[RMDB]
RNA sequence: GGGAACGACUCGAGUAGAGUCGAAAACGCUGGGCCUCCGCAAAGCUGGAGCAAUCCAAUUACCUGAUGCACAACUACCCAGCCUUCAUGACGGAGAUGAAGCAUGUCUUCGAAGACCCGCAGAGGCAUAUGAUACAGGCUUCGGCCUGUAUCAUAUAAAAGAAACAACAACAACAAC
Reactivity to 2A3 in 0.01 (KOAc 150mM, MgCl2 10mM, bicine 150mM(pH8.5), 24C), signal-to-noise 2, nucleotides 027 to 126: c020g000c020u000g020g000g050c000c000u030c040c050g000c110a190a130a040g010c060u060g040g000a000g040c020a010a090u000c040c040a070a070u130u080a050c000c070u070g100a040u070g020c010a030c030a210a080c020u060a040c020c020c010a020g030c000c010u050u070c050a150u020g170a090c000g010g000a040g030a060u160g070a040a000g030c080a110u160g040u040c040u050u010c010g060a060a010g010a120c020c010c020g000c030a000g000a030g110g000c020
Reactivity to DMS in 0.01 (KOAc 150mM, MgCl2 10mM, bicine 150mM(pH8.5), 24C), signal-to-noise 3, nucleotides 027 to 126: c180g030c060u010g030g000g010c060c040u000c050c120g000c050a060a070a140g010c080u020g010g000a070g010c170a110a150u010c020c060a020a110u000u000a120c240c070u000g020a060u000g010c040a090c000a050a090c070u020a120c050c010c010a120g000c020c020u000u000c060a070u000g010a160c010g000g000a040g010a110u020g000a060a050g010c080a070u000g000u010c010u000u000c010g020a070a110g040a130c140c010c030g010c070a050g000a030g000g000c090